[RMDB]
RNA sequence: GGGAACGACUCGAGUAGAGUCGAAAAAAGUGCACUUUAGAAUACAGCACACUUGCGUAAUAGAGAUAUUAUUCAAAAACAAGAUGUAAAUGAUCUUUAUCUGCUAAUAAUUGAUUCACUUGAGCUAAUCGUUACAAUGUUUCGACAUUGUAACGAUAAAAGAAACAACAACAACAAC
Reactivity to DMS in 0.01 (KOAc 150mM, MgCl2 10mM, bicine 150mM(pH8.5), 24C), signal-to-noise 5, nucleotides 027 to 126: a100a040g010u000g010c110a040c100u010u000u000a070g020a110a060u030a080c110a040g010c060a070c140a070c060u010u000g010c080g010u000a030a040u000a040g000a150g000a140u000a020u000u010a020u000u010c050a030a090a110a100a080c130a020a010g020a050u000g000u010a040a060a130u040g000a040u020c010u000u000u030a050u020c110u010g000c010u000a050a100u020a070a110u010u000g020a080u000u010c010a030c020u000u000g000a030g000c080u000a050
Reactivity to 2A3 in 0.01 (KOAc 150mM, MgCl2 10mM, bicine 150mM(pH8.5), 24C), signal-to-noise 9, nucleotides 027 to 126: a000a000g060u050g010c050a050c060u100u130u080a060g040a080a030u170a110c050a030g030c020a010c010a020c060u030u080g010c030g050u050a030a040u020a040g050a000g020a030u010a010u070u040a060u060u080c060a030a040a040a080a090c060a070a050g060a070u090g040u150a040a090a130u140g040a020u020c000u010u070u030a070u020c050u060g020c010u040a050a030u060a100a080u170u080g060a030u040u010c030a010c010u020u030g010a000g000c040u100a090
Source information
The data come from the RNA Mapping Database (RMDB), library OK1LIB. This 177-nucleotide RNA was probed chemically with DMS and 2A3. The RNA was probed in 150 mM KOAc, 10 mM MgCl2 and 150 mM bicine (pH 8.5) at 24 C. The 2A3 profile rests on 11,189 reads.